RNA sequence: GGGAACGACUCGAGUAGAGUCGAAAACAGAUGUAGCCAUAUACUGCAGGGACAAGAAAUGGGAAAUGACUCUCAAGGAAGCAGUGGCUAGGAGAGAAGCAGUGGAGGAGAUAUGCAUAUCAGACGAUAAGACCUUCCAGUUCGCUGGAAGGUCUUAAAAAGAAACAACAACAACAAC
Reactivity to DMS in 0.01 (KOAc 150mM, MgCl2 10mM, bicine 150mM(pH8.5), 24C), signal-to-noise 1, nucleotides 027 to 126: c090a070g020a100u000g050u000a060g050c030c050a060u010a140u000a100c030u010g000c060a110g030g020g010a100c100a100a080g010a050a150a100u020g000g040g010a080a080a110u000g020a130c060u000c010u000c020a090a180g020g020a110a100g040c030a020g020u010g000g000c040u010a090g010g030a090g010a040g010a040a110g010c040a000g010u000g060g010a030g020g030a100g010a060u000a050u000g020c070a100u000a000u030c090a080g000a120c180g000a100
This 177-nucleotide RNA was probed chemically with DMS. DMS adducts were read by reverse transcription with MarathonRT. High DMS reactivity at an A or C suggests that its Watson-Crick edge is free. Source: RMDB library OK2TRN, as collected in RNAgym. Conditions: 150 mM KOAc, 10 mM MgCl2 and 150 mM bicine (pH 8.5), 24 C.